Source: RMDB library ARCHII, as collected in RNAgym. This 207-nucleotide RNA was probed chemically with 2A3.
RNA sequence: GGGAACGACUCGAGUAGAGUCGAAAAGGGAGCGACUUGGCUUCGACAGGAGUAAGUCUGCUUAGAUGGCAUGUCGCUUUGGGCAAAGCGUAAAAAGCCCAAAUAAAAUUAAACGCAAACAACGUUAAAUUCGCUCCUGCUUACGCUAAAGCUGCGUCAAAGUUCCUUACUUCGGUAAGGAACUUUGAAAAGAAACAACAACAACAAC
Reactivity to 2A3 in 0.01 (KOAc 150mM, MgCl2 10mM, bicine 150mM(pH8.5), 24C), signal-to-noise 1, nucleotides 027 to 156: g050g000g030a020g030c000g010a030c030u050u040g040g000c010u050u030c010g100a120c060a010g020g050a040g110u220a150a050g050u070c030u040g140c000u010u030a030g040a100u130g020g000c020a030u040g010u060c000g000c000u010u010u000g010g000g030c060a090a130a040g000c020g110u180a060a000a000a040a080g050c010c000c000a020a080a030u070a000a010a040a000u100u120a070a010a000c050g040c080a080a040a150c010a080a000c010g010u050u090a020a060a050u120u010c010g010c020u010c010c000u010g000c000u030u010a010c030g020c000u010a000a030a180g070c100u070g030c000g000u000

Values cover nucleotides 27 to 156.
The 2A3 profile rests on 662 reads.